[RMDB]
RNA sequence: GGGAACGACUCGAGUAGAGUCGAAAAGAACUUGUCACAGGAAAGCAAAAUAUUCUCCUGCGCAAGUAUGGCCGUGGUGGUUAUCACUACACCCCAUUCCACUAUGAGCGAGACAACACCUCUUGCCUAAGCGACGCCUUCGGGCGUCGCAAAAGAAACAACAACAACAAC
Reactivity to 2A3 in 0.01 (KOAc 150mM, MgCl2 10mM, bicine 150mM(pH8.5), 24C), signal-to-noise 4, nucleotides 027 to 129: g040a020a000c040u010u040g100u120c020a000c010a090g000g040a110a070a050g090c160a150a090a130a110u260a100u070u130c080u000c020c010u000g000c020g000c000a000a000g020u030a030u030g080g000c020c010g000u050g030g000u010g010g000u100u050a070u160c030a050c080u070a010c020a100c040c020c000c000a000u080u030c010c000a010c000u070a080u020g010a080g030c040g020a010g010a010c020a080a020c000a100c010c000u000c000u000u020g010c010c010u010a060a020
Reactivity to DMS in 0.01 (KOAc 150mM, MgCl2 10mM, bicine 150mM(pH8.5), 24C), signal-to-noise 3, nucleotides 027 to 129: g000a120a050c000u020u060g040u030c000a120c000a020g010g000a040a090a120g050c240a000a050a080a090u060a050u050u000c130u020c010c020u020g020c250g130c000a000a050g000u020a090u000g030g060c040c070g050u030g000g000u040g000g000u140u010a140u060c080a010c130u020a040c130a210c000c030c010c000a130u080u030c080c000a130c210u010a010u000g030a150g000c100g010a110g050a100c000a070a260c230a150c110c060u040c040u070u000g010c100c000u000a000a050